[RMDB]
RNA sequence: GGGAACGACUCGAGUAGAGUCGAAAAUUUGGCUCGGUACUUUCAACGAGGAAGAAGAAGCUGCGUCUUCUUACGACAUCGCCGUGAGGAGAUUCCGCGGCCGCGACGCCGUCACUAACUUCAAAUCCACGUCAUCAUCGUUCGCGAUGAUGACGUGAAAAGAAACAACAACAACAAC
Reactivity to DMS in 0.01 (KOAc 150mM, MgCl2 10mM, bicine 150mM(pH8.5), 24C), signal-to-noise 2, nucleotides 027 to 126: u000u000u010g020g020c010u010c030g010g000u000a120c120u000u000u010c070a070a090c140g010a140g000g020a070a070g030a090a100g000a140a100g020c000u010g010c070g000u010c010u000u000c020u010u000a050c050g010a080c050a120u000c220g000c020c000g030u000g010a030g010g000a000g000a000u000u000c170c060g020c070g000g030c030c060g010c100g010a080c150g010c080c010g030u010c070a070c140u000a050a050c150u020u000c050a030a070a110u000c090
Reactivity to 2A3 in 0.01 (KOAc 150mM, MgCl2 10mM, bicine 150mM(pH8.5), 24C), signal-to-noise 1, nucleotides 027 to 126: u010u010u110g000g000c010u000c040g000g030u060a060c010u040u080u080c070a170a090c160g070a130g150g020a010a020g010a030a010g040a050a000g010c030u030g010c030g000u030c000u000u000c000u010u000a010c020g020a030c050a280u190c160g040c100c000g030u010g020a020g040g010a010g010a000u230u040c060c030g000c010g020g000c000c000g010c030g010a030c050g020c050c010g060u030c040a060c080u120a220a020c020u070u080c050a050a070a000u000c060